An RNA of 207 nucleotides, treated with DMS and 2A3 and read out base by base. The reactions ran in a buffer of 150 mM KOAc, 10 mM MgCl2 and 150 mM bicine (pH 8.5), at 24 C. 2A3 is a SHAPE reagent: it acylates the 2'-hydroxyl of flexible nucleotides of all four kinds. Source: RMDB library OK3TST, as collected in RNAgym.
RNA sequence: GGGAACGACUCGAGUAGAGUCGAAAAUUGGCGCGGCCCCGGUUAUACAGUGCGCCGGACCAGAACGGAUAGGCGCUGUGGGUCAGGCUGGACGGCGUGGAAAAGUAGGUUUGUCGCCAUUUCUUGUGAAUGGCCAUACCGGAGGCAACUUUGCGCAAGAUGAACUUGUUUUCGAACAAGUUCAUCUAAAAGAAACAACAACAACAAC
Reactivity to DMS in 0.01 (KOAc 150mM, MgCl2 10mM, bicine 150mM(pH8.5), 24C), signal-to-noise 2, nucleotides 027 to 156: u000u000g040g020c020g040c020g010g010c000c000c000c000g050g010u000u000a150u000a040c090a160g070u000g030c020g050c000c010g000g000a130c010c030a080g000a130a170c080g010g000a150u010a100g020g000c000g030c060u010g040u000g020g000g000u000c020a130g010g000c020u000g020g000a120c000g020g040c010g030u000g030g010a060a090a050a180g000u010a120g000g000u000u000u010g070u000c070g020c010c000a020u010u000u000c070u020u020g010u010g000a000a030u000g000g000c000c010a170u000a020c000c000g000g000a130g010g010c050a040a040c090u000u000u020g000c010g020c040a170
Reactivity to 2A3 in 0.01 (KOAc 150mM, MgCl2 10mM, bicine 150mM(pH8.5), 24C), signal-to-noise 3, nucleotides 027 to 156: u070u060g070g000c000g020c020g010g030c000c000c000c000g000g010u110u000a110u040a050c060a070g110u090g100c020g000c000c020g000g040a150c000c010a050g030a180a060c070g060g080a150u100a140g080g020c090g030c100u080g060u080g060g090g000u030c040a000g010g040c000u010g010g000a000c000g000g000c000g000u080g070g010a170a110a010a000g090u090a060g060g110u040u100u080g040u160c070g010c000c000a030u020u060u010c120u140u300g070u050g090a010a000u000g010g050c000c000a040u080a060c000c010g020g000a070g020g000c000a000a070c090u100u160u230g000c010g000c010a000